[RMDB]
RNA sequence: GGGAACGACUCGAGUAGAGUCGAAAAGUCCAGUGCUGCACCGUGUUCAGGGUAGUUGGUUUAAUGCACCAGACAUUCCAGAAGAAUCAUUGCAGGCGCAAGCUCAGGGGGCAUCUCUGUAUGGCCCACCUUCACGUGCUUUCGAGCACGUGAAGGUAAAAGAAACAACAACAACAAC
Reactivity to 2A3 in 0.01 (KOAc 150mM, MgCl2 10mM, bicine 150mM(pH8.5), 24C), signal-to-noise 1, nucleotides 027 to 126: g030u000c000c030a010g030u060g090c010u000g000c010a020c000c040g040u040g020u080u040c060a030g000g060g070u000a040g060u010u090g020g000u010u000u080a160a080u130g030c020a000c030c000a020g020a080c010a140u130u000c030c020a020g030a100a010g020a030a060u060c010a070u130u100g000c010a020g090g040c030g020c020a000a050g000c020u080c110a050g000g000g010g020g050c020a050u020c050u030c000u120g110u120a080u090g020g040c000c000c000
Reactivity to DMS in 0.01 (KOAc 150mM, MgCl2 10mM, bicine 150mM(pH8.5), 24C), signal-to-noise 2, nucleotides 027 to 126: g010u000c000c040a070g000u020g010c010u000g000c050a080c070c060g010u010g010u010u000c080a150g000g010g020u020a060g030u000u020g010g020u000u000u000a080a070u000g010c290a040c030c030a040g020a120c110a080u000u010c010c040a140g000a130a110g000a090a070u010c090a060u000u000g000c090a100g010g040c040g020c070a040a040g030c080u020c090a040g000g030g000g000g000c030a030u000c050u010c150u000g080u010a050u000g000g000c000c000c040